[RMDB]
RNA sequence: GGGAACGACUCGAGUAGAGUCGAAAAGGUCGGGGCUGCUCCCGCUUACUGCCCCCUGCCCAGGCUGGUGUGCACCCCCUCUGGCUGCUUUCAAGGCCUCUUCUCUCUUCUCGGCAGGACAGGCACACUAACUAGUGUGGUUCGCCACACUAGUUAGAAAAGAAACAACAACAACAAC
Reactivity to DMS in 0.01 (KOAc 150mM, MgCl2 10mM, bicine 150mM(pH8.5), 24C), signal-to-noise 3, nucleotides 027 to 126: g030g000u000c110g000g000g010g010c120u010g020c080u010c020c020c020g010c110u000u000a200c140u000g000c010c020c020c010c060u000g020c020c010c070a080g000g010c030u010g010g000u010g010u000g010c070a210c050c030c020c010c020u000c040u000g000g010c030u000g010c070u000u000u020c130a120a120g010g020c030c010u000c040u000u000c030u020c010u000c040u000u000c040u010c080g020g000c090a050g000g000a060c080a080g010g030c030a110c120a180